[RMDB]
RNA sequence: GGGAACGACUCGAGUAGAGUCGAAAACCGAGGGUGCCCGAAGCCGCCACGAUUCAGUGGUGUCCACGGCAAGAUCGGUGACUGGGACGAAGUCGUAACAAGGUAGCCGUAGGAGAACCUGCGGCUGUGCCAAACUCUGAUUCGUCAGAGUUUGGCAAAAAGAAACAACAACAACAAC
Reactivity to DMS in 0.01 (KOAc 150mM, MgCl2 10mM, bicine 150mM(pH8.5), 24C), signal-to-noise 3, nucleotides 027 to 126: c000c010g000a020g000g040g040u000g010c000c010c060g000a200a190g000c070c000g050c000c000a000c000g000a190u040u070c200a100g000u000g000g000u000g030u020c010c010a300c300g000g010c020a010a050g000a050u000c030g010g020u000g000a060c030u020g000g000g000a070c010g000a050a010g000u000c020g000u000a050a200c040a080a110g010g030u000a000g000c000c000g020u000a000g000g030a270g000a050a070c010c000u000g000c000g010g010c000u020g000
Reactivity to 2A3 in 0.01 (KOAc 150mM, MgCl2 10mM, bicine 150mM(pH8.5), 24C), signal-to-noise 3, nucleotides 027 to 126: c000c010g000a030g040g150g040u040g000c020c000c000g000a010a000g000c000c000g010c010c000a010c000g160a150u300u300c180a020g000u000g000g010u000g020u010c000c020a010c000g030g010c010a000a010g050a060u010c000g000g000u000g020a000c020u030g030g150g040a000c000g050a090a030g000u050c020g020u110a070a010c040a010a090g040g080u080a030g030c000c020g010u000a000g030g040a190g080a200a270c000c000u000g000c000g000g040c000u000g010

The record gives the reactivity of an RNA of 177 nucleotides to DMS and 2A3. Source: RMDB libraries RFM100 and RFMREP, as collected in RNAgym. The reactions ran in a buffer of 150 mM KOAc, 10 mM MgCl2 and 150 mM bicine (pH 8.5), at 24 C. For DMS the reverse transcriptase was MarathonRT.